[RMDB]
An RNA of 177 nucleotides, treated with DMS and read out base by base.
RNA sequence: GGGAACGACUCGAGUAGAGUCGAAAACUGACAGCGCAGCGAAUGGGACAACAGUCACCUCGCAUCUCAGUCAAGGCAUCUCUCAGGCAGCGGGACAGGACACCCCGGGUUUGCGCGCUGCUGCAGGCAACGGCUUCUUUUUCGAAAGAAGCCGUUGAAAAGAAACAACAACAACAAC
Reactivity to DMS in 0.01 (KOAc 150mM, MgCl2 10mM, bicine 150mM(pH8.5), 24C), signal-to-noise 1, nucleotides 027 to 126: c020u010g040a200c030a030g010c040g020c060a030g040c000g000a060a000u000g010g000g010a090c090a100a090c100a130g010u010c060a110c030c010u010c030g010c030a120u010c040u000c130a090g020u000c060a100a050g020g000c110a080u000c080u000c000u000c090a050g020g010c140a080g000c060g000g030g010a070c090a090g010g010a050c040a070c190c010c000c080g000g030g010u000u000u020g000c050g000c010g040c050u010g010c090u030g000c050a070g010g020